RNA sequence: GGGAACGACUCGAGUAGAGUCGAAAACGCACACUCUUCGGAGUGUGCGAAAAAAGCGUACUACCGAAGAACACGACGUACGCAGAUAGCUCCCAAAUAGGAGCUGUAGUACGUUGUGGGAGGUAUCGCAAAAAAUCCAUCACUUCGGUGAUGGAAAGUGAUUAGUCUACUUCGGUAGACUAAUCACAAAAGAAACAACAACAACAAC
Reactivity to DMS in 0.01 (KOAc 150mM, MgCl2 10mM, bicine 150mM(pH8.5), 24C), signal-to-noise 2, nucleotides 027 to 156: c000g010c010a000c000a020c010u010c000u010u010c300g070g010a030g060u020g030u000g020c030g010a000a010a060a070a020a070g050c000g010u000a100c130u000a090c010c010g000a130a230g030a240a140c030a060c050g000a000c030g010u000a010c000g010c130a090g020a060u000a040g010c010u000c010c000c010a060a140a210u010a070g000g020a020g040c000u000g030u000a140g020u000a000c020g000u010u000g010u000g020g000g020a100g000g000u000a020u000c050g000c020a010a010a060a140a070a120u000c010c000a020u000c000a000c010u000u020c300g090g020u010g010a000u020g010g000a010a000a050
Reactivity to 2A3 in 0.01 (KOAc 150mM, MgCl2 10mM, bicine 150mM(pH8.5), 24C), signal-to-noise 2, nucleotides 027 to 156: c040g020c010a010c000a010c010u010c010u070u160c300g060g000a000g000u000g000u000g000c000g010a000a000a000a000a000a000g080c090g050u160a150c060u010a000c010c000g220a250a020g010a100a030c010a000c000g010a000c000g000u000a000c000g000c040a000g060a040u170a010g030c020u050c000c000c040a130a190a050u300a130g000g000a000g010c000u000g010u020a100g000u000a000c000g010u000u010g000u000g000g000g000a030g000g010u020a020u300c080g000c000a000a180a000a000a000a000u000c000c000a000u000c000a000c010u050u100c260g120g000u000g010a000u000g000g000a020a040a000